[RMDB]
RNA sequence: GGGAACGACUCGAGUAGAGUCGAAAAGAUAUGGAGAGGUGGAAUGCGUCUAAUGCUACCCACCUCGGAAACGAGAGGCAUGGACGCGAGAGACCUCUCCUAAGUCAAAGUAUCGUUCGCGAUACAAGUGCAGAUCACGGUUCGCCGUGAUCUGCACAAAAGAAACAACAACAACAAC
Reactivity to 2A3 in 0.01 (KOAc 150mM, MgCl2 10mM, bicine 150mM(pH8.5), 24C), signal-to-noise 1, nucleotides 027 to 126: g000a020u070a000u160g010g000a010g000a000g040g050u040g010g070a120a110u080g020c000g030u020c000u220a300a140u040g000c020u070a180c010c090c000a040c030c010u000c000g000g020a030a020a020c020g030a010g000a010g000g010c000a020u000g000g030a000c020g000c030g000a100g000a010g040a070c000c000u000c000u010c000c000u010a040a000g020u010c040a020a030a120g000u000a000u020c010g060u160u110c230g040c000g120a000u010a000c040a030a080
Reactivity to DMS in 0.01 (KOAc 150mM, MgCl2 10mM, bicine 150mM(pH8.5), 24C), signal-to-noise 1, nucleotides 027 to 126: g000a020u000a300u000g010g000a000g020a030g000g000u010g000g000a300a150u000g000c000g000u000c000u000a040a050u000g000c000u000a030c210c000c120a300c160c000u010c000g000g030a040a110a070c010g010a040g000a170g000g000c000a000u000g000g040a010c000g040c000g000a110g000a300g000a090c000c000u000c000u000c000c000u000a000a070g010u000c000a070a120a130g000u000a000u000c000g040u000u000c280g030c000g000a000u000a070c010a130a080